An RNA of 177 nucleotides, treated with 2A3 and DMS and read out base by base.
DMS adducts were read by reverse transcription with MarathonRT.
For 2A3, 8,637 sequencing reads were counted.
[RMDB]
RNA sequence: GGGAACGACUCGAGUAGAGUCGAAAAGAUAUGGAGCAAGGGAGGGUCGGUUCCAGCCGAGUCGGAAACGAUAUCUGGACCGACCCUGUGAACUUGCUCCUAAGUCAAAGCGUCGUUCGCGACGCAACAUGCGAACGGAGUUCGCUCCGUUCGCAUGAAAAGAAACAACAACAACAAC
Reactivity to 2A3 in 0.01 (KOAc 150mM, MgCl2 10mM, bicine 150mM(pH8.5), 24C), signal-to-noise 3, nucleotides 027 to 126: g040a000u080a040u190g010g000a010g020c000a010a000g020g070g010a040g000g030g000u000c000g010g000u300u160c010c010a010g040c080c120g120a090g080u030c010g030g050a090a070a040c010g000a010u020a060u090c010u000g000g000a000c000c000g010a000c000c000c000u020g030u000g000a010a000c010u000u000g010c000u000c000c000u000a010a000g010u010c030a070a110a010g000c000g000u010c000g030u100u160c300g010c020g140a000c000g000c000a010a000
Reactivity to DMS in 0.01 (KOAc 150mM, MgCl2 10mM, bicine 150mM(pH8.5), 24C), signal-to-noise 8, nucleotides 027 to 126: g000a020u000a300u010g000g010a010g010c000a010a010g000g010g010a020g010g010g020u000c000g010g010u010u010c000c000a010g030c300c160g010a160g010u000c000g000g000a110a100a160c010g000a020u000a060u000c000u000g000g000a050c010c000g000a000c000c000c000u000g010u010g000a120a140c010u010u000g010c010u000c000c000u000a000a060g010u010c040a120a120a110g010c010g000u000c000g020u000u010c210g010c010g010a020c000g010c000a050a100
Conditions: 150 mM KOAc, 10 mM MgCl2 and 150 mM bicine (pH 8.5), 24 C.